Chemical mapping of a 207-nucleotide RNA with 2A3. It was measured as part of the RMDB library M2RFPK. The reactions ran in a buffer of 150 mM KOAc, 10 mM MgCl2 and 150 mM bicine (pH 8.5), at 24 C.
[RMDB]
RNA sequence: GGGAACGACUCGAGUAGAGUCGAAAACGUCCCCGUCGUACAGAAUGGUAACAUAUCUCUCCAAAUAUCUGAGCUUCGGUAUACGGGGAAACCCAACCCCUUGGGAAGAUUGGGUAUAUGGCUAAAUUACAUCGAUUGUACUUCGGUACAAUCGAAAGAUACACGCGAUCUUCGGAUCGCGUGUAUCAAAAGAAACAACAACAACAAC
Reactivity to 2A3 in 0.01 (KOAc 150mM, MgCl2 10mM, bicine 150mM(pH8.5), 24C), signal-to-noise 1, nucleotides 027 to 156: c040g090u020c000c010c010c010g070u050c020g000u080a090c060a040g080a030a150u090g000g000u220a150a030c000a060u170a170u060c040u010c040u000c040c050a080a250a070u150a110u060c060u020g010a040g070c000u100u040c080g020g040u060a010u010a070c040g020g020g000g000a040a030a070c080c040c000a000a010c000c000c000c040u040u060g040g040g020a000a040g070a180u070u010g000g020g000u000a040u030a020u160g060g000c010u100a050a100a150u120u030a040c050a130u050c000g010a010u000u010g000u000a000c000u060u040c250g060g010u000a000c000a000a000u000c000g000a000a000a000